[RMDB]
RNA sequence: GGGAACGACUCGAGUAGAGUCGAAAAGACAUACCGCAGUAUGACCCGUCCGGAGGUUGGCGGUGGGGUAGAGCACUGAUAGGAGGAUCCGGGGGGUGACACCCUCGCCCUCCUGUCAAACUCCGAAAAUGUGAGAACGGUUCGCCGUUCUCACAUUAAAAGAAACAACAACAACAAC
Reactivity to DMS in 0.01 (KOAc 150mM, MgCl2 10mM, bicine 150mM(pH8.5), 24C), signal-to-noise 2, nucleotides 027 to 126: g020a090c010a060u010a000c000c210g000c140a200g020u010a090u030g000a100c010c010c000g030u030c120c030g000g000a100g020g020u010u010g020g000c110g000g000u000g020g050g000g010u030a030g000a050g030c090a080c110u000g000a020u000a010g010g020a010g000g000a050u010c220c000g010g010g000g000g010g000u000g000a170c160a230c000c010c010u010c010g000c170c000c000u000c000c000u020g000u010c010a010a050a100c030u000c020c010g040a080a050
Reactivity to 2A3 in 0.01 (KOAc 150mM, MgCl2 10mM, bicine 150mM(pH8.5), 24C), signal-to-noise 1, nucleotides 027 to 126: g010a010c010a020u020a030c000c010g060c030a010g000u110a070u150g090a110c010c000c000g100u100c020c050g000g090a040g040g000u070u020g010g000c030g000g020u020g000g020g000g010u140a050g000a040g100c010a020c110u000g010a010u040a000g000g000a000g000g000a000u120c050c000g010g000g000g000g000g000u000g050a000c020a100c010c000c000u000c000g010c000c000c000u010c000c000u000g010u000c000a000a000a000c010u010c000c000g030a050a170

Overview
This 177-nucleotide RNA was probed chemically with DMS and 2A3. The data come from the RNA Mapping Database (RMDB), libraries RFM100 and RFMREP. The RNA was probed in 150 mM KOAc, 10 mM MgCl2 and 150 mM bicine (pH 8.5) at 24 C. In probing experiments dimethyl sulfate is read out at A N1 and C N3, which are open when not base-paired.